[RMDB]
RNA sequence: GGGAACGACUCGAGUAGAGUCGAAAAAUAAGCGCUGAAAGCAUCUAAGCGCGAAACUCACCACAAGAUGAGAAUUCCCUUGAAGGUCGUUGUAGACUACAACGUUGAUAGGAUGCAGAUGUACAGGCCUAUUAGACGAAUUCGUUCGUCUAAUAGGAAAAGAAACAACAACAACAAC
Reactivity to 2A3 in 0.01 (KOAc 150mM, MgCl2 10mM, bicine 150mM(pH8.5), 24C), signal-to-noise 8, nucleotides 027 to 126: a000u100a040a020g000c010g000c010u010g010a110a090a050g010c000a000u000c000u000a020a010g000c000g000c010g010a010a000a000c000u000c000a010c030c020a070c080a180a030g060a200u020g000a000g020a030a070u030u020c000c010c000u010u080g100a090a040g090g040u070c020g000u020u040g040u060a100g040a300c090u050a010c060a010a000c020g040u050u110g090a090u100a100g110g010a000u020g000c030a010g050a150u140g030u090a060c060a090g060g090
Reactivity to DMS in 0.01 (KOAc 150mM, MgCl2 10mM, bicine 150mM(pH8.5), 24C), signal-to-noise 9, nucleotides 027 to 126: a090u020a080a260g000c000g030c000u000g010a120a070a120g010c020a010u000c010u010a260a070g010c000g020c000g000a050a060a080c010u000c000a020c040c050a150c300a110a150g010a120u000g000a010g000a090a130u010u000c000c000c000u010u020g010a160a110g000g000u010c020g010u000u010g010u000a070g010a150c140u010a060c030a020a020c040g000u000u010g000a130u020a080g000g000a020u010g010c010a150g000a090u020g010u010a080c170a140g010g010

Description
An RNA of 177 nucleotides, treated with 2A3 and DMS and read out base by base. 2A3 adducts were read by reverse transcription with SuperScript II with manganese. It was measured as part of the RMDB libraries RFM100 and RFMREP.